[RMDB]
RNA sequence: GGGAACGACUCGAGUAGAGUCGAAAAAUAAAUAGGGAGAACGGGUUUGGUUUGAGGUCGUUCCCUGCGGCUGUAUAUUAGACUCUCUUUCCGAAUUUUAUCGUCUAAUAUAUAGCGGCAGGAAAAAUCUAUGUUAUCGAUUCGUCGAUAACAUAGAAAAAGAAACAACAACAACAAC
Reactivity to 2A3 in 0.01 (KOAc 150mM, MgCl2 10mM, bicine 150mM(pH8.5), 24C), signal-to-noise 1, nucleotides 027 to 126: a000u190a000a050a050u130a070g030g030g010a080g000a050a000c020g000g020g010u110u130u050g000g090u020u030u100g110a030g030g080u070c000g000u020u030c010c010c000u000g000c020g100g000c000u000g000u030a000u000a000u000u010a000g010a030c010u020c000u000c000u150u060u070c130c050g040a100a100u150u130u140u140a160u210c040g000u000c000u000a010a000u000a000u020a010u000a010g000c030g060g000c010a010g020g000a030a030a000a000a060
Reactivity to DMS in 0.01 (KOAc 150mM, MgCl2 10mM, bicine 150mM(pH8.5), 24C), signal-to-noise 2, nucleotides 027 to 126: a100u010a060a070a090u020a100g000g000g000a060g010a100a080c070g010g000g010u010u000u010g010g000u000u000u010g000a070g030g010u010c010g010u000u000c010c000c010u000g010c000g010g010c000u010g020u000a000u000a010u000u000a010g000a020c010u000c210u000c090u000u010u010c170c090g030a060a120u000u010u010u010a120u000c130g000u000c000u000a000a000u000a010u000a010u000a010g020c000g010g030c000a020g000g010a020a040a050a100a090

The record gives the reactivity of an RNA of 177 nucleotides to 2A3 and DMS. It was measured as part of the RMDB library M2PK90. Reactivities are given for positions 27 through 126. For DMS the reverse transcriptase was MarathonRT. The DMS profile rests on 2,593 reads. The reactions ran in a buffer of 150 mM KOAc, 10 mM MgCl2 and 150 mM bicine (pH 8.5), at 24 C.